Chemical mapping of a 207-nucleotide RNA with 2A3. For 2A3 the reverse transcriptase was SuperScript II with manganese. Source: RMDB library RNAMAK, as collected in RNAgym. Values cover nucleotides 27 to 156. The reactions ran in a buffer of 150 mM KOAc, 10 mM MgCl2 and 150 mM bicine (pH 8.5), at 24 C.

[RMDB]
RNA sequence: GGGAACGACUCGAGUAGAGUCGAAAACGCUGGGUUGUCCGAGUACGUUAGAGACGGGAGUACAACAGCAGACUGAAGCGCGCACGGUCUGACAUGUAUCGUCUCUAACGUAUAGUGACAACCUGUGCUGAAGCGCGCACGGCAACCGAAAGGUGCGGCAAGUGGAAUGGUUCGCCAUUCCACUUGCAAAAGAAACAACAACAACAAC
Reactivity to 2A3 in 0.01 (KOAc 150mM, MgCl2 10mM, bicine 150mM(pH8.5), 24C), signal-to-noise 2, nucleotides 027 to 156: c040g000c000u020g000g000g010u020u000g010u000c020c020g040a140g140u030a020c000g010u010u010a000g000a000g000a000c030g040g080g070a160g120u150a080c100a080a010c010a050g040c000a000g000a020c040u010g080a200a070g030c030g020c030g010c040a040c020g000g020u010c000u030g070a130c020a230u110g020u040a110u300c000g000u020c000u010c000u000a000a000c000g000u010a000u000a000g070u090g000a000c000a010a000c010c000u010g000u020g000c010u040g010a090a020g000c010g000c000g040c000a000c010g010g070c030a040a020c040c010g030a130a130a040g010g040u060g000c000g060